[RMDB]
RNA sequence: GGGAACGACUCGAGUAGAGUCGAAAACCAUAACAGUUCGCUGUUAUGGACUGUCGGAAUGCGGAAUAAUUAAUCGUCCGCUUACGAUUAAUACCGACAAUAAAGCGUAACACUUCGGUGUUACGAACGUGUUAAGUGGAUUCGUCCACUUAACACGAAAAGAAACAACAACAACAAC
Reactivity to DMS in 0.01 (KOAc 150mM, MgCl2 10mM, bicine 150mM(pH8.5), 24C), signal-to-noise 5, nucleotides 027 to 126: c000c000a010u000a000a010c000a010g010u000u010c210g040c010u000g010u000u000a000u000g000g000a090c150u000g000u000c010g010g000a120a070u000g010c030g000g000a040a040u000a090a140u010u000a080a080u000c180g010u000c050c050g010c040u000u000a050c090g010a050u000u000a050a060u010a200c010c000g010a040c100a080a080u010a050a080a120g010c010g010u000a000a010c000a000c000u000u010c160g040g000u000g000u000u000a000c010g000a030a060
Reactivity to 2A3 in 0.01 (KOAc 150mM, MgCl2 10mM, bicine 150mM(pH8.5), 24C), signal-to-noise 8, nucleotides 027 to 126: c000c000a000u010a010a000c000a010g050u060u090c140g060c100u000g000u010u010a010u000g000g030a060c060u040g000u020c000g010g030a130a080u110g020c020g020g080a050a040u140a120a110u200u180a080a100u140c100g040u020c030c020g000c020u010u070a020c020g000a010u000u150a020a030u050a110c010c010g040a010c040a000a060u190a120a080a010g090c010g010u010a000a000c000a000c020u030u080c210g090g000u000g000u000u000a000c000g000a020a020